Annotation: Chemical mapping of a 177-nucleotide RNA with DMS.

RNA sequence: GGGAACGACUCGAGUAGAGUCGAAAAUGUUGGUGCAAGAAGAGAAGACCUACUUUAGUUAUAUGAUUGUUAUGCAAUCGGUAGGGUUGAUUCAGUUUGCCUUGGUAGCCUUCUUUAUUGGGCGCGGAUUACCCGCGUGAUUCGUCACGCGGGUAAUAAAAGAAACAACAACAACAAC
Reactivity to DMS in 0.01 (KOAc 150mM, MgCl2 10mM, bicine 150mM(pH8.5), 24C), signal-to-noise 2, nucleotides 027 to 126: u000g010u000u000g000g040u000g000c050a050a060g010a110a100g000a110g000a080a050g000a100c120c020u000a010c000u000u000u010a130g020u000u010a120u010a080u010g000a020u000u000g000u000u010a150u010g010c010a020a020u000c020g000g010u000a050g020g000g000u000u000g000a090u010u000c090a060g000u000u010u000g010c060c040u000u010g000g020u010a080g010c100c030u000u010c060u000u000u000a120u020u020g000g000g010c030g020c100g010g000
The reactions ran in a buffer of 150 mM KOAc, 10 mM MgCl2 and 150 mM bicine (pH 8.5), at 24 C.